[RMDB]
RNA sequence: GGGAACGACUCGAGUAGAGUCGAAAAGAUAUGGAGCCAUGUGAGCUUUUGACGAGCGUGGUUUCGGAAACGAAACCAACGCUCGAUAAGCUCCAUGGCUCCUAAGUCAAACCACACUUCGGUGUGGCCAUUCUAAAGCGUUCGCGCUUUAGAAUGGAAAAGAAACAACAACAACAAC
Reactivity to DMS in 0.01 (KOAc 150mM, MgCl2 10mM, bicine 150mM(pH8.5), 24C), signal-to-noise 3, nucleotides 027 to 126: g000a060u000a300u010g000g000a030g020c000c000a000u000g020u020g010a020g020c000u010u000u000u010g030a300c140g010a030g010c020g040u010g000g000u000u000u020c000g020g000a100a100a230c000g020a000a000a000c000c000a040a050c000g020c000u000c000g000a030u000a010a020g010c000u000c000c010a010u000g000g020c010u000c000c000u000a000a040g010u000c020a080a140a300c000c000a000c000a000c000u010u000c200g050g010u000g030u000g000g000
Reactivity to 2A3 in 0.01 (KOAc 150mM, MgCl2 10mM, bicine 150mM(pH8.5), 24C), signal-to-noise 3, nucleotides 027 to 126: g020a010u070a060u190g010g000a010g010c000c010a030u050g280u250g030a010g020c050u140u110u180u270g270a160c040g000a000g000c030g030u010g000g000u010u000u000c000g000g030a070a110a000c010g010a000a000a030c000c030a170a080c000g000c000u020c000g000a000u010a000a000g010c000u000c000c000a000u010g000g000c000u010c000c000u000a010a010g000u000c000a020a030a060c000c000a000c010a000c000u060u100c240g180g000u020g000u010g010g000
Source: RMDB library TTRDES, as collected in RNAgym.
The record gives the reactivity of an RNA of 177 nucleotides to DMS and 2A3.
The DMS profile rests on 3,113 reads.
2A3 adducts were read by reverse transcription with SuperScript II with manganese.
Conditions: 150 mM KOAc, 10 mM MgCl2 and 150 mM bicine (pH 8.5), 24 C.